The record gives the reactivity of an RNA of 207 nucleotides to DMS and 2A3.
The RNA was probed in 150 mM KOAc, 10 mM MgCl2 and 150 mM bicine (pH 8.5) at 24 C.
RNA sequence: GGGAACGACUCGAGUAGAGUCGAAAAGGAUGGUCUUCGGACCAUCCAAAAAAACCUUUGUGUCCGAGCAGCGAGGAUCAACAUGUUCCCAUUGGGAACACGUGUUGGGAGCUGUCUCGGACACUCUGGUAAAAACUCCACACUUCGGUGUGGAGAACAACCCUGUUAAGUUCGCUUAACAGGGUUGAAAAGAAACAACAACAACAAC
Reactivity to DMS in 0.01 (KOAc 150mM, MgCl2 10mM, bicine 150mM(pH8.5), 24C), signal-to-noise 1, nucleotides 027 to 156: g010g010a020u000g000g000u000c000u000u000c300g050g010a010c000c000a010u010c000c000a000a000a030a060a010a010a030c010c000u000u000u000g030u000g040u000c000c000g030a010g010c010a030g000c030g010a210g020g010a120u000c020a040a010c020a030u000g000u000u000c000c000c020a300u010u000g060g010g000a040a010c000a040c050g030u010g010u000u010g010g000g000a260g010c010u000g000u020c000u000c000g000g010a010c000a000c000u000c010u000g000g040u000a060a070a110a060a120c010u000c000c000a020c000a020c000u000u010c290g090g000u000g020u000g000g000a000g000a010a080
Reactivity to 2A3 in 0.01 (KOAc 150mM, MgCl2 10mM, bicine 150mM(pH8.5), 24C), signal-to-noise 2, nucleotides 027 to 156: g010g010a000u000g000g010u000c010u040u110c300g060g000a000c000c000a000u010c000c000a060a000a000a000a000a020a010c000c000u010u000u010g000u000g000u000c000c000g010a000g000c000a000g000c000g050a180g080g010a000u010c010a000a000c000a000u050g000u010u000c040c000c030a210u240u300g010g000g000a000a030c040a040c160g100u030g000u010u000g000g010g000a020g000c010u030g090u150c000u030c010g000g010a000c000a000c000u000c000u000g010g000u050a060a000a040a040a020c010u000c010c000a000c000a000c000u040u080c240g070g000u000g000u000g000g000a000g000a000a000
For DMS the reverse transcriptase was MarathonRT. The DMS profile rests on 3,193 reads. The data come from the RNA Mapping Database (RMDB), library RNAMAK. Reactivities are given for positions 27 through 156.